[RMDB]
RNA sequence: GGGAACGACUCGAGUAGAGUCGAAAAACGCUACCUUUCGAGGUAGCGUCACCUACUUCGCGCAAGCGUCGAGUCGUUCCCAUGGUUGCGUGAAGUAGUUUGAGUGGCAGACGUUCGCGUCUGCCAAAAACCGAAAUAUCUUCGGAUAUUUCGGUUUAAAAGAAACAACAACAACAAC
Reactivity to DMS in 0.01 (KOAc 150mM, MgCl2 10mM, bicine 150mM(pH8.5), 24C), signal-to-noise 1, nucleotides 027 to 126: a030c000g000c000u000a010c000c000u000u000u020c200g000a010g020g010u000a000g000c010g020u000c060a060c270c000u010a020c010u000u000c000g020c000g000c100a040a050g010c140g020u010c110g020a020g020u000c000g010u010u000c000c010c010a020u000g020g000u000u000g020c010g020u000g000a020a040g020u000a010g010u000u010u010g000a130g010u000g010g020c000a000g000a000c000g000u000u010c190g010c010g020u000c010u000g000c010c000a000a010
Source: RMDB library M2PK50, as collected in RNAgym. An RNA of 177 nucleotides, treated with DMS and read out base by base.